Conditions: 150 mM KOAc, 10 mM MgCl2 and 150 mM bicine (pH 8.5), 24 C. An RNA of 177 nucleotides, treated with 2A3 and read out base by base. It was measured as part of the RMDB library RFM100.
[RMDB]
RNA sequence: GGGAACGACUCGAGUAGAGUCGAAAAGAAAGAAGAGACAGUUUCUGUUCUCGGCCGAUACAUUUCUGGUGUACCUCAAAACUGAUGGUACCCGUAAUGUUUCCGCCGAGAACCGACUGCGCUCAAACCCGCUUUAUCUCUUCGGAGAUAAAGCGGGAAAAGAAACAACAACAACAAC
Reactivity to 2A3 in 0.01 (KOAc 150mM, MgCl2 10mM, bicine 150mM(pH8.5), 24C), signal-to-noise 3, nucleotides 027 to 126: g150a010a070a000g100a060a000g000a010g000a000c010a010g000u040u120u200c020u020g000u000u000c000u000c000g000g000c040c020g000a020u000a010c000a010u010u030u010c110u270g050g000u210g010u070a020c010c000u040c040a040a190a260a300c150u120g020a100u270g020g000u000a000c000c010c000g010u010a000a000u000g000u000u000u010c000c000g000c000c010g000a000g000a000a000c000c000g000a000c000u020g050c030g030c120u010c010a040a030a040